[RMDB]
RNA sequence: GGGAACGACUCGAGUAGAGUCGAAAAAGGCAUUUUAGGAUAACAAGCCACCUGAUAGGCUCUGAUUUGUUGAAAAGCCUGGACAGCCUUAGAAGCUUCGGUAAAGAACAUGCCACAAGAUUUAGCGUUGAAUGAACCAGCUUGGGUAUUAGCAUCGCGGUAUAAGUGACUUCGGUCACUUAUACCGAAAAGAAACAACAACAACAAC
Reactivity to 2A3 in 0.01 (KOAc 150mM, MgCl2 10mM, bicine 150mM(pH8.5), 24C), signal-to-noise 2, nucleotides 027 to 156: a000g060g000c060a010u020u060u130u200a100g100g000a150u160a200a100c010a070a020g010c000c010a030c020c000u060g060a140u090a090g060g000c030u000c000u060g090a240u030u040u110g060u000u010g080a060a080a000a000g030c000c000u000g000g010a010c030a050g010c010c000u050u050a090g030a120a020g020c010u040u070c090g020g000u070a070a100a000g020a040a040c010a020u080g030c030c000a140c040a030a050g060a120u120u280u210a060g000c030g050u040u020g030a090a200u090g040a060a000c000c000a000g010c020u050u030g000g000g010u080a040u140u070a090g040c030a050u040c110g000
Reactivity to DMS in 0.01 (KOAc 150mM, MgCl2 10mM, bicine 150mM(pH8.5), 24C), signal-to-noise 2, nucleotides 027 to 156: a110g020g010c010a070u010u000u000u000a060g070g000a150u020a090a160c050a110a110g010c020c050a070c070c020u000g020a230u000a040g000g000c010u000c090u010g030a170u000u000u010g020u020u000g000a100a120a070a110g020c000c000u020g000g010a150c090a090g000c010c020u000u010a160g000a130a090g010c010u000u000c040g030g010u000a070a100a090g000a070a120c100a020u010g000c030c040a120c010a030a090g000a110u000u000u010a050g010c030g000u000u010g010a070a120u010g010a090a060c050c000a050g000c060u040u000g030g020g040u000a090u000u000a080g000c030a140u000c050g000